RNA sequence: GGGAACGACUCGAGUAGAGUCGAAAACACUAUACUAAGUGAUGGGACAUUUGACUUACUAUCUGUCAAAGAGGUGUUAAGUUCAGAAAACCUCUGCAAACUUGAGUCCUGUGCACAUGGUGGUGCUGGAGACUUUCAAAUAUUCGAUCUAAGGUCACCCAUGCGUAUUAUUCGUAAUACGCAUGGGAAAAGAAACAACAACAACAAC
Reactivity to 2A3 in 0.01 (KOAc 150mM, MgCl2 10mM, bicine 150mM(pH8.5), 24C), signal-to-noise 5, nucleotides 027 to 156: c020a010c010u090a050u230a140c030u090a160a050g030u030g020a020u040g010g000g020a000c040a080u050u040u030g010a010c020u030u110a070c040u120a130u200c060u090g030u030c000a000a060a060g030a010g010g030u040g040u130u140a100a070g040u090u110c040a020g080a060a180a030a030c030c010u000c010u030g030c090a140a100a100c060u090u170g020a010g010u020c000c010u060g040u090g080c000a000c000a050u080g040g010u030g010g000u010g000c030u010g040g010a050g010a020c000u050u090u000c180a080a090a050u110a050u040u070c030g030a040u000c030u090a050a030g060g010u030c020a020
Reactivity to DMS in 0.01 (KOAc 150mM, MgCl2 10mM, bicine 150mM(pH8.5), 24C), signal-to-noise 2, nucleotides 027 to 156: c020a070c040u010a070u030a110c070u010a090a120g050u000g010a130u010g000g020g010a140c040a110u000u010u000g030a090c050u000u000a080c180u000a080u000c090u010g030u000c060a060a130a030g000a040g120g070u000g000u000u010a030a160g020u000u000c120a150g010a080a050a120a040c020c000u000c010u010g020c050a060a080a040c050u000u020g030a110g010u010c050c050u000g080u000g040c040a050c040a100u020g000g030u000g010g010u000g010c010u000g000g000a280g020a080c040u000u010u020c090a100a050a150u010a140u000u000c040g030a030u000c040u010a050a130g010g000u000c030a180